[RMDB]
RNA sequence: GGGAACGACUCGAGUAGAGUCGAAAAAUCGGUUGGCUGGCCCAACAACACCGAAACGCUAGAGAAACUAGGUCGCCUGAUCUGGAAGGAAACCAGGUGUUUGAACAUUGGUUACCAGCACCCUAAAACCCGAAGGGUAGUUCGCUACCCUUCGGGUAAAAGAAACAACAACAACAAC
Reactivity to DMS in 0.01 (KOAc 150mM, MgCl2 10mM, bicine 150mM(pH8.5), 24C), signal-to-noise 2, nucleotides 027 to 126: a040u000c110g000g030u000u010g040g020c050u000g040g050c120c010c040a030a060c050a040a020c030a020c020c000g010a140a160a120c230g010c070u020a050g020a230g020a170a140a140c030u000a020g010g000u000c020g000c200c130u020g000a050u000c020u030g000g010a100a080g040g000a060a070a090c170c040a120g000g000u000g000u010u040u030g000a090a050c140a180u000u020g000g000u000u000a180c000c000a000g000c000a130c050c000c050u000a060a050a060
Reactivity to 2A3 in 0.01 (KOAc 150mM, MgCl2 10mM, bicine 150mM(pH8.5), 24C), signal-to-noise 1, nucleotides 027 to 126: a000u120c160g040g030u040u030g110g020c050u050g040g070c050c030c000a010a010c000a000a000c000a000c000c010g060a100a030a000c080g020c120u140a020g010a010g050a180a210a070c030u000a010g050g020u040c040g050c100c120u040g030a010u000c030u060g010g110a110a050g020g010a180a030a040c140c030a020g000g040u000g020u040u020u070g020a060a050c000a060u050u010g030g020u040u060a040c010c000a010g000c010a010c010c000c010u090a140a090a030
Source: RMDB library OK2TST, as collected in RNAgym.
The record gives the reactivity of an RNA of 177 nucleotides to DMS and 2A3.
The RNA was probed in 150 mM KOAc, 10 mM MgCl2 and 150 mM bicine (pH 8.5) at 24 C.
2A3 adducts were read by reverse transcription with SuperScript II with manganese.